[RMDB]
Conditions: 150 mM KOAc, 10 mM MgCl2 and 150 mM bicine (pH 8.5), 24 C.
An RNA of 207 nucleotides, treated with 2A3 and DMS and read out base by base.
2A3 adducts were read by reverse transcription with SuperScript II with manganese.
RNA sequence: GGGAACGACUCGAGUAGAGUCGAAAAACUCUAGGCCCGUGACAUGUUACGGACAAAUUCCGUGACCGUGUUAAGGCCAGCAUUGAAGAGCGUACCUAGCUGCGUUUCAACCUGCAUGGGUUGGGGCGGCUUAGCGGAUUAAGGAAAGUUCUACCCUAGCUCUUAUAAUCUUCGGAUUAUAAGAGCUAAAAGAAACAACAACAACAAC
Reactivity to 2A3 in 0.01 (KOAc 150mM, MgCl2 10mM, bicine 150mM(pH8.5), 24C), signal-to-noise 4, nucleotides 027 to 156: a000c030u030c050u120a130g000g010c020c040c020g100u270g010a000c000a000u070g010u010u020a000c000g000g040a030c110a110a240a230u250u000c000c000g000u000g000a010c020c110g020u010g000u010u010a000a010g000g000c000c000a000g020c040a070u120u190g120a090a060g010a010g000c020g000u020a030c010c010u020a040g020c000u020g020c010g030u000u010u050c000a000a000c000c000u100g100c110a190u300g030g000g000u010u010g000g000g000g000c020g040g030c020u040u070a010g010c020g010g130a110u170u260a110a080g030g030a160a170a040g020u050u000c030u040a160c000c020c020u040
Reactivity to DMS in 0.01 (KOAc 150mM, MgCl2 10mM, bicine 150mM(pH8.5), 24C), signal-to-noise 2, nucleotides 027 to 156: a030c010u000c020u010a120g000g040c010c000c000g060u000g000a000c010a040u010g040u010u000a000c000g020g020a070c060a150a070a210u020u010c000c030g020u010g000a020c060c090g110u000g000u000u010a300a140g010g010c010c010a080g000c150a170u000u010g000a090a070g000a050g010c020g000u000a060c000c000u000a050g020c020u000g010c000g030u000u000u010c010a030a060c010c010u000g020c280a110u010g030g010g030u000u000g000g010g030g040c010g010g040c010u000u000a010g000c150g020g000a180u000u000a130a090g020g010a120a090a110g030u000u000c020u000a140c040c010c140u000